[RMDB]
RNA sequence: GGGAACGACUCGAGUAGAGUCGAAAAUGAUUUUAAAUUGACAGUAAACUGAAGGUGAUAUUGUUGGGUUUUCAUACUUGUAGGCACACAGGCAAUGCCCUCCUUAGGCAGUUUAACUGGGACCCAAGGAGAGAAAUAGUUUCGACUAUUUCUCUCCAAAAGAAACAACAACAACAAC
Reactivity to DMS in 0.01 (KOAc 150mM, MgCl2 10mM, bicine 150mM(pH8.5), 24C), signal-to-noise 4, nucleotides 027 to 126: u000g010a110u010u010u000u010a040a100a130u010u010g010a120c020a040g000u010a040a070a060c040u000g010a080a070g010g000u000g020a130u010a080u000u000g010u000u000g000g010g020u010u000u000u010c110a090u010a080c070u010u010g010u000a060g020g020c140a030c100a050c060a040g010g000c100a040a090u000g000c030c020c030u000c050c050u000u000a090g020g020c030a020g010u000u000u010a030a060c020u000g010g000g000a100c010c010c020a070a130
Reactivity to 2A3 in 0.01 (KOAc 150mM, MgCl2 10mM, bicine 150mM(pH8.5), 24C), signal-to-noise 1, nucleotides 027 to 126: u000g000a000u040u100u080u150a070a280a070u120u060g040a040c010a040g020u020a050a030a000c010u020g070a020a000g070g000u080g070a110u040a020u230u140g130u050u060g040g000g000u050u040u020u120c120a060u080a140c040u060u110g050u080a070g010g030c030a010c020a010c050a070g060g000c000a020a060u060g020c010c040c000u020c000c010u040u030a080g140g000c000a000g010u000u030u000a110a030c020u000g050g000g050a030c000c000c000a000a040
Background: The record gives the reactivity of an RNA of 177 nucleotides to DMS and 2A3. DMS adducts were read by reverse transcription with MarathonRT. The reactions ran in a buffer of 150 mM KOAc, 10 mM MgCl2 and 150 mM bicine (pH 8.5), at 24 C. For 2A3 the reverse transcriptase was SuperScript II with manganese. Values cover nucleotides 27 to 126.